This 177-nucleotide RNA was probed chemically with 2A3. For 2A3, 425 sequencing reads were counted.
[RMDB]
RNA sequence: GGGAACGACUCGAGUAGAGUCGAAAAAGAUAUCCAGAUCGUCCGGGUCGGGAUAAAUCGGCGACCAGGCCGCGUUCAUAGGCUGCAGCGUCAGUCGUGGCGUCAGCAGCAGCCGUUUAACCGUAAAUCGUUCCCCUCACUUCGGUGAGGGGAACGAAAAAGAAACAACAACAACAAC
Reactivity to 2A3 in 0.01 (KOAc 150mM, MgCl2 10mM, bicine 150mM(pH8.5), 24C), signal-to-noise 1, nucleotides 027 to 126: a000g080a020u070a000u080c000c000a000g000a030u140c070g230u030c000c080g180g000g000u010c000g050g050g000a000u030a020a060a000u170c100g020g000c000g080a140c000c000a030g200g000c000c000g000c000g040u000u040c000a010u020a180g020g000c000u000g020c050a020g080c000g000u000c000a040g180u250c140g120u000g050g000c040g000u150c040a010g090c010a010g000c000a000g000c020c010g000u050u080u100a000a010c000c000g070u030a000a000a060
The RNA was probed in 150 mM KOAc, 10 mM MgCl2 and 150 mM bicine (pH 8.5) at 24 C.